[RMDB]
RNA sequence: GGGAACGACUCGAGUAGAGUCGAAAAUAUACAAGAACGUUGGGAAAAGCGAUUCGCUUUACGAGUCGCAGAGCACGACGAAUCCAUUCUUGUACUUAAAACCAGAUUUGAUCAGGUAUGGAAUUGGGCGCAGUUCAGUAUUCGUACUGAACUGCGCAAAAGAAACAACAACAACAAC
Reactivity to 2A3 in 0.01 (KOAc 150mM, MgCl2 10mM, bicine 150mM(pH8.5), 24C), signal-to-noise 1, nucleotides 027 to 126: u090a000u000a000c000a000a070g000a230a000c000g000u000u020g000g020g040a020a020a020a010g000c000g000a000u000u000c070g080c160u180u090u280a110c000g000a000g020u000c000g000c000a000g050a000g050c090a030c080g030a000c000g090a070a030u150c120c020a000u000u000c000u000u000g010u150a000c000u000u120a000a110a040a000c000c080a040g000a300u090u190u280g030a030u170c040a000g090g080u080a030u030g040g000a000a270u070u170g040g070
Reactivity to DMS in 0.01 (KOAc 150mM, MgCl2 10mM, bicine 150mM(pH8.5), 24C), signal-to-noise 1, nucleotides 027 to 126: u010a240u000a010c020a000a060g000a020a010c000g130u000u010g000g000g020a210a060a100a160g000c010g000a000u000u000c000g040c300u040u080u020a040c030g000a000g020u000c000g000c000a070g000a160g140c200a070c020g020a000c000g000a100a120u150c080c270a230u000u000c000u000u000g000u000a010c160u000u000a000a000a150a200c040c000a120g140a120u020u020u030g060a060u000c080a080g000g040u000a120u030g000g000a030a130u050u020g000g000